[RMDB]
RNA sequence: GGGAACGACUCGAGUAGAGUCGAAAAAAAGAACAAAUGCUAAAUAGAGUAACAGUUAAAUGUAUGUGUACACUCUUCCCAAAUGCCAAGAGUGCAGCGGUGGGGUGAGAUUCAGAUAUUCAUUUAUUUCUAAGUCUGUAGUUAACAUUUAUGUUCAGUACCGUAGUAUAUUCGUAUACUACGGUACAAAAGAAACAACAACAACAAC
Reactivity to DMS in 0.01 (KOAc 150mM, MgCl2 10mM, bicine 150mM(pH8.5), 24C), signal-to-noise 2, nucleotides 027 to 156: a060a080a080g000a020a050c000a040a030a040u000g020c020u010a030a040a040u000a030g000a110g030u000a160a110c100a090g020u000u000a020a050a050u000g020u000a040u010g020u000g050u000a080c020a020c010u000c000u010u000c170c010c030a050a090a110u010g020c000c010a070a080g020a190g040u000g040c060a050g000c150g010g090u000g020g010g000g030u010g010a050g010a070u000u000c010a030g010a080u000a040u010u010c010a050u010u000u000a040u030u000u000c040u000a040a190g040u010c010u010g020u000a020g020u000u010a010a000c010a040u000u000u000a050u020g010u000u000c010a090
Reactivity to 2A3 in 0.01 (KOAc 150mM, MgCl2 10mM, bicine 150mM(pH8.5), 24C), signal-to-noise 5, nucleotides 027 to 156: a010a000a010g020a000a020c010a010a040a020u030g010c000u050a050a070a100u090a070g050a030g040u090a100a020c030a040g020u040u040a020a060a020u040g010u050a020u040g120u010g020u060a010c010a010c040u010c000u050u080c030c010c000a090a160a070u060g000c010c010a210a080g100a080g140u250g070c020a010g040c060g090g040u030g010g000g010g010u010g020a050g020a030u100u100c010a020g030a150u060a040u090u050c020a010u000u040u080a080u030u120u060c020u040a070a090g070u000c010u010g110u010a020g070u020u050a030a000c000a010u020u050u090a080u140g000u020u030c010a000

Conditions: 150 mM KOAc, 10 mM MgCl2 and 150 mM bicine (pH 8.5), 24 C. Chemical mapping of a 207-nucleotide RNA with DMS and 2A3. It was measured as part of the RMDB library OK3TST. DMS adducts were read by reverse transcription with MarathonRT. Values are in units of 0.01, from 0 to 300, in steps of 10.